[RMDB]
RNA sequence: GGGAACGACUCGAGUAGAGUCGAAAAGAAAGAAAGAAGAGUGCUAUGAUUGUAAAAGUAAUUCCUCGUACUGAAAGCCAAUGGCUUGAAAGACUCACAUUACUACCCAUAGAAUAUGAGCACUCAAGAUGUAACUGUAUUUCGAUACAGUUACAUCAAAAGAAACAACAACAACAAC
Reactivity to DMS in 0.01 (KOAc 150mM, MgCl2 10mM, bicine 150mM(pH8.5), 24C), signal-to-noise 9, nucleotides 027 to 126: g010a100a110a100g010a100a100a100g000a130a130g000a010g010u000g000c000u000a050u010g010a100u010u010g000u010a050a070a090a050g010u000a010a030u000u010c150c120u010c190g010u010a090c040u010g010a150a020a010g010c000c010a120a140u040g020g020c000u000u000g000a130a060a030g010a060c030u000c160a070c210a030u000u000a010c010u000a090c040c040c030a110u020a080g000a060a050u020a050u010g010a030g000c000a000c010u000c010a060a090
Reactivity to 2A3 in 0.01 (KOAc 150mM, MgCl2 10mM, bicine 150mM(pH8.5), 24C), signal-to-noise 9, nucleotides 027 to 126: g090a020a050a000g100a030a110a010g130a070a010g010a000g000u010g000c010u030a040u160g070a140u140u160g080u190a050a070a050a030g010u010a010a030u080u110c030c020u080c090g020u050a170c020u020g040a030a010a000g000c010c010a140a200u300g010g000c000u020u020g030a110a100a000g020a020c010u020c070a060c010a040u020u020a010c010u040a050c010c020c020a040u070a070g120a060a020u160a090u230g050a010g000c000a000c000u000c000a000a020